[RMDB]
RNA sequence: GGGAACGACUCGAGUAGAGUCGAAAAGAUAUGGAAUGAGCAUCGAUCAUACUGACUCGGAAACGAGUUUAUGGGAGCUCCUUCCUAAGUCAAAACCCUCGGACAUCCUUCGGGAUGUCCGAGGGAAGACUUGUUAUGUGUUCGCACAUAACAAGUCAAAAGAAACAACAACAACAAC
Reactivity to 2A3 in 0.01 (KOAc 150mM, MgCl2 10mM, bicine 150mM(pH8.5), 24C), signal-to-noise 2, nucleotides 027 to 126: g010a030u070a020u160g010g020a000a020u020g000a010g030c020a290u300c110g150a120u110c040a010u050a100c130u210g020a020c000u010c000g030g020a060a080a040c010g000a000g000u010u040u030a020u030g020g020g010a000g000c000u000c000c000u010u000c010c000u010a130a020g010u000c010a010a000a070a250c010c010c000u000c000g030g000a000c020a030u060c050c050u120u250c300g170g040g000a010u010g000u000c020c010g040a010g030g010g000a000a010
Reactivity to DMS in 0.01 (KOAc 150mM, MgCl2 10mM, bicine 150mM(pH8.5), 24C), signal-to-noise 2, nucleotides 027 to 126: g000a050u000a300u020g000g000a020a000u000g000a010g000c020a300u020c160g010a130u000c020a030u000a040c300u020g020a000c000u000c020g020g000a080a110a180c000g020a000g010u000u000u000a010u010g010g000g000a080g000c000u000c000c040u000u000c000c010u000a040a080g000u010c020a070a120a090a140c000c020c030u010c000g000g020a030c000a020u000c010c030u000u000c180g000g030g010a020u000g000u000c000c000g000a000g020g010g000a000a040